[RMDB]
RNA sequence: GGGAACGACUCGAGUAGAGUCGAAAAAGUCACCUAUUACGAUAGGUGACAUUUGAACCAGCGAACAAUUCAGUUGCGAGAUUCGAGGUUUCAGUCUGCAUCAUAGUAGCCAUUACGAUGGCUACAACUCACUCCCGACUGUUCGCAGUCGGGAGAAGGUAAUGAAAAAGUUCGCUUUUUCAUUACCAAAAGAAACAACAACAACAAC
Reactivity to 2A3 in 0.01 (KOAc 150mM, MgCl2 10mM, bicine 150mM(pH8.5), 24C), signal-to-noise 5, nucleotides 027 to 156: a000g000u000c000a000c000c000u000a010u020u070a040c200g050a010u000a010g000g000u000g000a000c000a000u010u010u070g030a030a020c010c000a000g160c010g010a000a020c010a100a140u160u070c010a010g010u010u000g000c010g010a000g000a010u010u020c000g000a020g020g040u110u200u220c030a020g050u030c010u020g030c030a100u100c030a040u110a080g000u000a000g000c000c000a000u030u040a030c230g150a030u000g000g000c000u000a000c010a000a010c000u060c030a060c020u000c000c000c000g000a000c010u020g030u020u070c200g000c100a000g000u000c000g010g000g000a010g000a000a000
Reactivity to DMS in 0.01 (KOAc 150mM, MgCl2 10mM, bicine 150mM(pH8.5), 24C), signal-to-noise 2, nucleotides 027 to 156: a060g010u000c000a030c000c010u000a040u000u000a080c300g040a060u010a010g000g020u000g000a000c020a000u000u010u000g020a120a250c020c010a140g040c090g000a090a060c020a090a140u010u000c070a150g020u000u000g020c000g000a100g020a090u000u000c050g020a110g020g020u000u000u020c050a080g000u000c070u000g000c050a080u040c070a050u010a110g020u000a000g030c000c000a020u000u000a120c230g000a130u000g000g010c030u020a000c000a050a060c090u020c000a120c010u010c000c000c000g020a010c010u020g000u000u010c250g000c040a000g000u000c010g000g000g010a000g020a000a020